[RMDB]
RNA sequence: GGGAACGACUCGAGUAGAGUCGAAAACGGCCCAGACCGUUCAGAAGGUUGGAGCCAAGGCUUACGUAUACAACCCACUUCUCCUGGGGACCAACGGCACACAGAAAACGGAUGGUGGCUCGAGACACACCGCCCUGUUAUUCGUAACAGGGCGGUGAAAAGAAACAACAACAACAAC
Reactivity to 2A3 in 0.01 (KOAc 150mM, MgCl2 10mM, bicine 150mM(pH8.5), 24C), signal-to-noise 1, nucleotides 027 to 126: c010g090g000c010c010c000a050g170a210c010c030g070u180u260c090a130g090a190a040g130g050u060u030g040g030a070g000c050c000a010a040g100g030c050u110u110a060c090g080u160a070u030a300c100a040a140c010c010c000a040c070u000u030c100u010c010c060u000g000g030g030g050a100c010c000a030a000c040g040g000c080a050c000a000c010a050g140a060a140a030a000c010g090g020a070u040g100g000u070g030g000c030u040c080g020a040g000a020c000a010
Reactivity to DMS in 0.01 (KOAc 150mM, MgCl2 10mM, bicine 150mM(pH8.5), 24C), signal-to-noise 1, nucleotides 027 to 126: c140g000g030c010c040c070a180g030a160c020c000g030u000u000c230a060g030a140a110g000g000u000u000g010g000a150g040c040c040a090a150g060g000c140u000u000a040c160g000u030a160u000a080c130a030a110c020c050c020a070c110u000u020c010u000c080c020u000g020g010g000g000a090c080c010a120a060c130g000g020c020a030c070a070c150a090g040a150a060a030a040c030g000g010a120u000g020g040u000g000g050c000u000c070g000a100g020a040c210a130